[RMDB]
RNA sequence: GGGAACGACUCGAGUAGAGUCGAAAACUGUGAGGCUUCGGCCUCACAGAUAGGUUUCUUUUUAGUGAUUUUUCCAAACCCCUUUGUGCAAAAAUCAUUUAACUCGCGUACGUUUCGACGUACGCAAAGUCAAUUUAUAAUUCGUUAUAAAUUGACUAAAAGAAACAACAACAACAAC
Reactivity to DMS in 0.01 (KOAc 150mM, MgCl2 10mM, bicine 150mM(pH8.5), 24C), signal-to-noise 4, nucleotides 027 to 126: c010u000g000u000g010a010g020g010c000u000u010c210g040g010c000c000u000c000a000c000a010g010a060u000a080g010g000u000u000u000c000u000u000u000u000u000a020g000u000g000a010u000u000u000u000u000c000c010a000a020a020c020c000c020c020u000u010u010g020u000g000c180a000a010a020a010a010u000c000a010u000u000u010a090a090c270u000c150g010c000g010u000a000c000g010u000u000u010c170g010a020c000g010u000a000c000g000c010a000a010
Reactivity to 2A3 in 0.01 (KOAc 150mM, MgCl2 10mM, bicine 150mM(pH8.5), 24C), signal-to-noise 3, nucleotides 027 to 126: c000u010g000u010g010a000g010g000c030u060u130c300g160g000c010c000u000c000a000c000a000g000a000u060a010g000g010u010u020u030c000u030u010u000u000u010a010g000u010g020a020u000u000u000u000u000c010c000a010a010a040c050c070c020c030u040u110u050g030u070g050c060a000a000a000a010a000u010c000a000u070u070u030a100a060c050u040c140g000c000g000u000a000c000g000u010u030u120c210g070a010c010g000u000a000c010g000c010a000a000
This 177-nucleotide RNA was probed chemically with DMS and 2A3. The 2A3 profile rests on 8,325 reads. For 2A3 the reverse transcriptase was SuperScript II with manganese. The reactions ran in a buffer of 150 mM KOAc, 10 mM MgCl2 and 150 mM bicine (pH 8.5), at 24 C. DMS adducts were read by reverse transcription with MarathonRT. It was measured as part of the RMDB library M2PK50.